The record gives the reactivity of an RNA of 177 nucleotides to 2A3 and DMS. For DMS the reverse transcriptase was MarathonRT. The data come from the RNA Mapping Database (RMDB), library TTRDEL. For 2A3 the reverse transcriptase was SuperScript II with manganese.
RNA sequence: GGGAACGACUCGAGUAGAGUCGAAAAGAUAUGGAAAGAUGACACGCGCUCGUUGAAAUCGGAAACGAUGGAGAGCGACCCGUGCAAUGUCUUUCCUAAGUCAAAGCGUACUCUUCGGAGUACGCAAGUUAGUAUGAUGGUUCGCCAUCAUACUAACAAAAGAAACAACAACAACAAC
Reactivity to 2A3 in 0.01 (KOAc 150mM, MgCl2 10mM, bicine 150mM(pH8.5), 24C), signal-to-noise 7, nucleotides 027 to 126: g020a020u070a030u150g000g000a010a000a000g010a010u110g080a070c000a000c010g010c010g000c010u010c010g230u290u050g010a030a030a010u010c010g010g020a070a050a020c010g000a010u010g010g020a050g000a000g030c000g010a010c030c020c010g000u000g000c020a070a070u120g010u000c000u000u000u010c000c000u020a140a010g050u040c070a110a060a030g000c000g000u010a000c000u010c000u030u100c300g100g000a000g000u000a010c000g000c010a000a000
Reactivity to DMS in 0.01 (KOAc 150mM, MgCl2 10mM, bicine 150mM(pH8.5), 24C), signal-to-noise 8, nucleotides 027 to 126: g010a050u000a300u000g000g000a010a020a020g000a020u000g000a100c020a010c010g020c060g000c050u000c000g010u000u000g010a150a120a020u000c000g010g000a120a100a140c010g010a010u000g000g000a150g000a020g000c000g010a040c170c170c060g010u000g000c070a070a050u000g010u000c000u000u000u000c000c000u010a030a100g010u000c050a070a080a130g000c000g010u000a000c000u000c000u000u010c190g020g000a020g020u000a000c000g010c000a010a010